[RMDB]
The record gives the reactivity of an RNA of 177 nucleotides to 2A3 and DMS.
RNA sequence: GGGAACGACUCGAGUAGAGUCGAAAAAGUCAAAGCGCGUCCAAUUACUAAGGCAUUAAUUUCAUGUGUACCUUCGUACGUGUAAAUCGCUUCUGCAUCAGAGAAGAAACGUGCAAUAUCAUAAUCGGACUCCAUCAUGGUUCGCCAUGAUGGAGUCAAAAGAAACAACAACAACAAC
Reactivity to 2A3 in 0.01 (KOAc 150mM, MgCl2 10mM, bicine 150mM(pH8.5), 24C), signal-to-noise 2, nucleotides 027 to 126: a000g240u240c150a110a000a000g070c060g000c000g000u050c000c000a000a090u080u000a010c050u080a000a000g000g000c000a000u110u210a060a080u030u190u160c070a110u090g080u040g030u170a120c000c000u000u040c180g040u070a040c000g010u020g070u030a030a150a100u010c190g000c090u000u020c020u020g110c020a130u080c070a050g140a020g010a130a000g050a030a000a000c080g000u010g010c000a000a050u130a080u190c020a080u110a250a040u140c030g000
Reactivity to DMS in 0.01 (KOAc 150mM, MgCl2 10mM, bicine 150mM(pH8.5), 24C), signal-to-noise 1, nucleotides 027 to 126: a180g000u050c070a070a130a200g010c040g000c000g000u060c240c000a110a110u000u000a130c150u000a070a060g000g000c070a000u000u020a010a060u000u000u050c000a020u000g060u000g060u000a080c070c010u000u000c000g020u000a000c190g000u000g000u110a060a070a150u120c040g080c000u050u120c050u000g010c050a090u000c120a110g000a250g000a060a010g000a160a070a000c080g000u000g000c010a090a000u000a050u070c160a020u160a090a050u000c040g010
DMS adducts were read by reverse transcription with MarathonRT. The reactions ran in a buffer of 150 mM KOAc, 10 mM MgCl2 and 150 mM bicine (pH 8.5), at 24 C. The data come from the RNA Mapping Database (RMDB), library OK1LIB. For DMS, 891 sequencing reads were counted.